Structure probing data (2A3) for a 207-nucleotide construct. The 2A3 profile rests on 1,120 reads.

RNA sequence: GGGAACGACUCGAGUAGAGUCGAAAAUGAGACAAACACGCUUCACAAUGUGCGGCAAAGAAACAUUGUUUAUGCAAAGGCACUUCGCAAUGUGUGCUCAAACAUUGCUUAUUCAAACAGGCUUCACAAAAGAAUCAGUGGUUCGCCACUGAUUCAACGUUAACAACCCGUUCGCGGGUUGUUAACGAAAAGAAACAACAACAACAAC
Reactivity to 2A3 in 0.01 (KOAc 150mM, MgCl2 10mM, bicine 150mM(pH8.5), 24C), signal-to-noise 2, nucleotides 027 to 156: u150g010a040g020a040c040a010a140a000c130a010c070g000c030u000u020c010a000c000a010a010u040g010u030g010c010g060g010c150a130a150a080g070a010a020a000c000a000u010u010g090u060u100u110a130u130g000c020a030a080a130g200g000c010a000c040u040u020c030g000c010a020a010u010g010u010g030u010g030c130u080c120a040a060a010c010a030u010u010g000c010u070u140a150u090u130c040a040a080a090c020a020g050g000c030u080u100c060a050c040a090a050a020a100g000a000a000u000c000a000g000u000g040g050u020u050c170g050c040c000a010c000u000g000a000u000u000c000a000a000